[RMDB]
RNA sequence: GGGAACGACUCGAGUAGAGUCGAAAAUAUGAAGGAAUGUAUUGGGUAAUAGUUGACAUACCGAUGUUCUGCUGGUAGCAUCGAUGAACGAAAAUAGGUAACGGCUUGCCGCUGAAGAUAUUGGAAAGAAAAGAACUAGGUUCGCCUAGUUCUUUUCAAAAGAAACAACAACAACAAC
Reactivity to 2A3 in 0.01 (KOAc 150mM, MgCl2 10mM, bicine 150mM(pH8.5), 24C), signal-to-noise 2, nucleotides 027 to 126: u150a040u070g040a050a030g030g040a090a030u080g010u080a060u060u150g050g000g020u070a060a060u050a150g090u020u080g050a030c020a030u090a060c030c010g030a020u020g040u040u050c010u050g130c060u080g000g060u070a020g010c010a010u030c030g100a100u080g020a030a000c020g060a000a030a040a060u100a030g040g000u040a050a030c010g000g000c020u010u070g030c020c010g000c030u040g030a040a000g050a060u030a040u100u100g050g020a080a080a060
Reactivity to DMS in 0.01 (KOAc 150mM, MgCl2 10mM, bicine 150mM(pH8.5), 24C), signal-to-noise 6, nucleotides 027 to 126: u010a060u010g010a110a090g000g010a070a060u010g000u010a040u000u000g000g010g010u010a070a070u010a080g010u000u010g010a120c120a090u000a060c070c020g010a040u010g010u000u000c070u010g010c070u010g000g010u000a040g010c020a030u000c050g020a060u010g000a040a050c080g010a070a040a070a100u010a060g010g010u010a050a110c070g010g000c050u000u000g010c040c050g010c050u000g000a070a080g000a080u000a050u000u000g010g000a090a080a130